This 177-nucleotide RNA was probed chemically with DMS and 2A3.
RNA sequence: GGGAACGACUCGAGUAGAGUCGAAAAGUACGUAGAAGCUGCGUUAUGCUAGAAAAUAGCAUAGCGAGCAUAUCGGAGAAAAGAAAAGCGAAAGCGGUUACGUACAACGAUAUGCAACGAUAUGCAAGGGAUAUUCAUAGUUCGCUAUGAAUAUCCCAAAAGAAACAACAACAACAAC
Reactivity to DMS in 0.01 (KOAc 150mM, MgCl2 10mM, bicine 150mM(pH8.5), 24C), signal-to-noise 3, nucleotides 027 to 126: g020u000a010c020g000u000a020g000a060a130g010c040u000g000c010g030u010u000a000u000g000c000u000a030g000a120a060a050a100u000a010g000c000a010u000a010g010c000g000a110g030c000a010u000a000u000c010g000g020a140g000a110a070a080a140g000a080a050a090a100g000c100g000a060a130a030g010c030g030g000u080u010a020c010g000u010a020c020a140a140c150g000a100u020a050u050g040c010a120a110c000g000a040u000a020u010g000c010a140a160
Reactivity to 2A3 in 0.01 (KOAc 150mM, MgCl2 10mM, bicine 150mM(pH8.5), 24C), signal-to-noise 8, nucleotides 027 to 126: g000u000a000c010g010u010a010g010a130a010g020c030u060g050c000g010u000u000a000u000g000c010u000a000g090a100a300a110a150u000a020g010c000a000u000a000g010c010g010a010g000c000a000u000a000u010c020g080g080a070g150a060a110a080a000g190a010a120a010a000g110c110g090a140a070a000g030c000g020g020u100u020a010c000g010u010a010c010a050a000c070g070a090u080a030u300g040c030a030a010c030g020a030u020a000u050g030c030a070a100

DMS adducts were read by reverse transcription with MarathonRT.